[RMDB]
The record gives the reactivity of an RNA of 177 nucleotides to 2A3 and DMS. For DMS the reverse transcriptase was MarathonRT.
RNA sequence: GGGAACGACUCGAGUAGAGUCGAAAAGCAGACCUGCUCCGCAGAAGCGAGUAAAAGGAACCAGACGCAAGAUGAUGACGACUCCGACCACGAUUCCGCGACUGGCACACCCUUGGCGUCGCGUCGAACCUGUAGUUACCUUCGGGUAACUACAGGUAAAAGAAACAACAACAACAAC
Reactivity to 2A3 in 0.01 (KOAc 150mM, MgCl2 10mM, bicine 150mM(pH8.5), 24C), signal-to-noise 2, nucleotides 027 to 126: g030c020a000g040a120c010c020u000g020c010u020c030c030g000c030a060g040a290a000g030c030g040a030g020u090a010a130a040a050g040g010a010a030c020c000a010g000a050c030g020c040a060a060g030a120u130g010a020u070g050a040c030g030a060c020u060c060c040g070a100c060c000a060c050g070a090u130u030c020c010g030c020g030a020c020u030g040g020c050a030c010a030c040c000c000u000u050g040g000c040g020u050c010g030c000g030u030c010g010a030
Reactivity to DMS in 0.01 (KOAc 150mM, MgCl2 10mM, bicine 150mM(pH8.5), 24C), signal-to-noise 4, nucleotides 027 to 126: g020c080a080g000a130c050c030u000g010c030u000c050c060g020c100a090g010a080a130g010c050g000a080g010u010a050a060a080a050g000g010a100a100c040c020a070g000a120c040g020c020a110a080g010a120u010g000a070u000g000a140c080g000a120c050u010c080c060g000a100c050c020a040c090g010a140u010u000c060c060g020c020g010a040c020u020g000g000c060a060c140a060c070c010c040u000u000g020g020c090g010u000c030g020c050g000u000c050g020a120

The 2A3 profile rests on 3,536 reads. Conditions: 150 mM KOAc, 10 mM MgCl2 and 150 mM bicine (pH 8.5), 24 C.